[RMDB]
RNA sequence: GGGAACGACUCGAGUAGAGUCGAAAAUUAGAAGAUACAUGAUCACAAUCCUGCUGGAGACUGGGAAGAUGACUGGACCGAAACCCAGGGUAGUUGAGCUCAUUGCCGACAUUGGGAAUUACAUCAGUGAAACCGGAAUGGCUGGAUUCUUCCUAACAAAUUCCGUUGAUUUCGAUCAACGGAAUUUAAAAGAAACAACAACAACAAC
Reactivity to DMS in 0.01 (KOAc 150mM, MgCl2 10mM, bicine 150mM(pH8.5), 24C), signal-to-noise 1, nucleotides 027 to 156: u010u010a050g010a110a040g000a240u000a020c060a070u020g000a140u010c080a050c080a070a120u000c050c000u000g030c010u010g030g000a080g000a080c070u010g030g030g000a030a130g050a070u010g010a130c060u010g000g020a130c020c010g060a130a090a150c070c000c000a050g010g000g050u010a090g000u020u010g050a160g010c000u000c040a120u000u010g030c030c040g030a060c040a050u000u080g010g000g020a090a090u000u010a110c090a070u010c040a060g000u010g010a100a050a110c040c010g000g000a070a050u010g000g060c060u000g020g010a200u000u000c000u000u000c020c000u020a090a110c140
Reactivity to 2A3 in 0.01 (KOAc 150mM, MgCl2 10mM, bicine 150mM(pH8.5), 24C), signal-to-noise 2, nucleotides 027 to 156: u120u070a050g050a090a010g070a030u090a080c070a110u220g050a100u160c040a000c050a100a060u020c000c010u020g010c050u080g070g030a090g040a120c070u040g000g010g020a010a060g010a030u020g020a020c060u050g010g060a020c000c090g140a040a030a040c000c000c010a010g020g050g030u050a090g020u030u050g100a030g010c020u020c110a040u020u050g090c020c000g010a050c020a040u050u050g020g000g000a010a030u220u150a180c060a150u090c000a030g010u030g050a080a010a030c020c000g000g040a040a030u020g020g000c000u010g000g000a000u000u010c010u050u000c000c000u020a030a020c040